[RMDB]
RNA sequence: GGGAACGACUCGAGUAGAGUCGAAAACAGUGGGUUCGGCUCAGAGAGUCCGAGCUUAAGAUAUAGUCGGUCCCUACCGAAAGGUAGACUGUGGGAGGAAGCUCGUUCGGUGAGCGGAGAGCCCACAGUGGUCGAGUUAAUACCACUUCUCGCAAGGCACAUUGCUGCACUUCGGUGCAGCAAUGUGAAAAGAAACAACAACAACAAC
Reactivity to 2A3 in 0.01 (KOAc 150mM, MgCl2 10mM, bicine 150mM(pH8.5), 24C), signal-to-noise 1, nucleotides 027 to 156: c010a010g040u030g050g020g000u020u000c020g030g000c040u040c090a090g040a000g030a000g230u060c010c010g040a020g000c020u080u110a040a010g100a160u130a100u050a130g040u020c000g030g010u050c020c000c020u010a010c000c000g060a080a000a000g000g010u040a010g020a090c010u010g000u020g000g050g020a040g010g000a040a000g000c020u000c010g020u220u060c070g090g240u210g020a030g000c030g020g030a010g000a030g000c000c000c000a000c000a010g000u000g020g020u040c020g000a060g080u060u220a000a040u120a140c000c000a000c000u060u040c010u030c020g030c030a030a050g080g020
Structure probing data (2A3) for a 207-nucleotide construct. The RNA was probed in 150 mM KOAc, 10 mM MgCl2 and 150 mM bicine (pH 8.5) at 24 C. It was measured as part of the RMDB library RSTRND.